The record gives the reactivity of an RNA of 177 nucleotides to 2A3 and DMS.
DMS adducts were read by reverse transcription with MarathonRT.
The DMS profile rests on 5,105 reads.
RNA sequence: GGGAACGACUCGAGUAGAGUCGAAAAAACAGCUGCUUCGGCAGCUGUUAACGCUCGCGGCUCGAGGCUGCACGAGCCGGACAGCAGCCAGUCCGCGAGGUAUAGCCUUGGAGUUCGCUCCAAGGAACAUGGUAGCAAUGUUCGCAUUGCUACCAUGAAAAGAAACAACAACAACAAC
Reactivity to 2A3 in 0.01 (KOAc 150mM, MgCl2 10mM, bicine 150mM(pH8.5), 24C), signal-to-noise 3, nucleotides 027 to 126: a010a010c000a000g020c010u000g010c000u070u050c180g110g000c000a000g000c000u000g000u000u000a000a000c040g010c010u000c000g000c010g000g000c030u030c030g110a130g010g040c000u010g000c040a060c150g080a080g140c040c010g040g070a060c060a030g020c000a000g000c000c000a010g010u000c000c010g000c000g000a000g000g000u060a100u160a100g030c000c000u000u020g010g010a010g000u050u110c150g080c100u000c010c000a010a010g000g000a010a020
Reactivity to DMS in 0.01 (KOAc 150mM, MgCl2 10mM, bicine 150mM(pH8.5), 24C), signal-to-noise 4, nucleotides 027 to 126: a020a020c010a000g030c010u010g010c000u000u010c210g020g030c000a000g010c000u000g010u000u000a020a090c140g000c000u000c000g010c000g010g010c130u000c060g020a090g000g010c000u000g000c020a120c090g010a150g010c110c080g000g000a100c130a130g010c000a020g010c000c010a100g000u000c000c010g010c010g000a000g000g020u000a020u000a110g000c010c010u000u000g010g000a010g010u000u020c200g020c020u000c000c000a000a020g010g010a030a100